The record gives the reactivity of an RNA of 177 nucleotides to DMS and 2A3. 2A3 adducts were read by reverse transcription with SuperScript II with manganese. As a SHAPE reagent, 2A3 marks flexible, mostly unpaired nucleotides at the ribose 2'-OH.

[RMDB]
RNA sequence: GGGAACGACUCGAGUAGAGUCGAAAAGAAGACGUGACGAAAAGUCACGUCAAUAUAGAGACUACGCAACUCUAAAAAACACAACAAAAGUGUAAAAGCGUAGCAGGAUCGAGAGAUCCUGAAAAGAUAAAAUGCGUCAUUUCGAUGACGCAUUUUAAAAAGAAACAACAACAACAAC
Reactivity to DMS in 0.01 (KOAc 150mM, MgCl2 10mM, bicine 150mM(pH8.5), 24C), signal-to-noise 4, nucleotides 027 to 126: g020a190a140g020a010c000g000u000g030a020c010g000a080a060a090a180g010u000c000a000c010g010u010c010a010a020u020a120u020a010g000a020g010a220c000u000a000c000g000c000a200a030c010u000c010u030a000a050a080a110a110a030c000a000c010a050a110c270a130a050a130a070g000u000g010u010a020a050a040a260g010c000g010u000a000g000c000a010g000g000a000u000c000g000a200g020a150g000a010u000c000c000u010g000a030a080a110a060g000a130
Reactivity to 2A3 in 0.01 (KOAc 150mM, MgCl2 10mM, bicine 150mM(pH8.5), 24C), signal-to-noise 2, nucleotides 027 to 126: g160a070a010g000a000c010g000u030g000a000c010g100a130a230a070a030g000u000c000a000c000g000u000c000a000a000u020a000u000a000g000a000g020a050c000u000a000c000g000c040a140a090c010u020c010u010a010a000a050a060a040a000c130a020c060a220a040c140a030a130a110a050g000u020g000u010a060a090a010a000g000c000g000u000a000g000c000a000g000g000a000u000c010g000a010g000a000g000a120u000c000c000u000g000a000a000a000a000g070a010